[RMDB]
RNA sequence: GGGAACGACUCGAGUAGAGUCGAAAAGUAGCAAUGGCUUGUGGUUCGUUUAGAGACUGCUUGCUUAUAACACUUGGCCAGAACGAAAAUCUAUCUAAUAUCCGUAGCGUCAUAAUGUGUAGUAUAGGACACUGUCUUUGUUCGCAAAGACAGUGUCAAAAGAAACAACAACAACAAC
Reactivity to 2A3 in 0.01 (KOAc 150mM, MgCl2 10mM, bicine 150mM(pH8.5), 24C), signal-to-noise 1, nucleotides 027 to 126: g070u050a020g010c090a060a040u080g020g000c000u030u030g000u000g030g000u000u000c050g030u020u170u230a100g020a040g000a060c020u000g010c000u030u010g020c000u110u060a120u070a090a020c020a000c000u010u000g040g000c000c010a030g010a090a030c020g010a050a050a000a050u020c030u030a050u000c030u060a100a010u050a110u100c060c010g040u040a010g050c000g030u030c010a040u050a130a070u080g060u040g020u050a040g050u020a060u030a090g160
Reactivity to DMS in 0.01 (KOAc 150mM, MgCl2 10mM, bicine 150mM(pH8.5), 24C), signal-to-noise 2, nucleotides 027 to 126: g000u000a030g010c130a080a170u000g000g020c000u000u000g000u010g000g020u000u000c030g000u010u010u020a130g000a140g000a030c010u000g040c010u000u000g010c010u010u000a100u000a110a060c110a030c050u000u000g020g030c040c020a080g000a080a060c110g020a080a030a040a060u000c060u000a090u000c040u000a070a110u030a040u010c010c050g010u000a090g000c070g020u010c070a090u000a070a080u000g000u000g000u000a070g000u000a090u010a150g010
Description:
An RNA of 177 nucleotides, treated with 2A3 and DMS and read out base by base. The RNA was probed in 150 mM KOAc, 10 mM MgCl2 and 150 mM bicine (pH 8.5) at 24 C. Values cover nucleotides 27 to 126. 2A3 adducts were read by reverse transcription with SuperScript II with manganese. It was measured as part of the RMDB library RFMREP.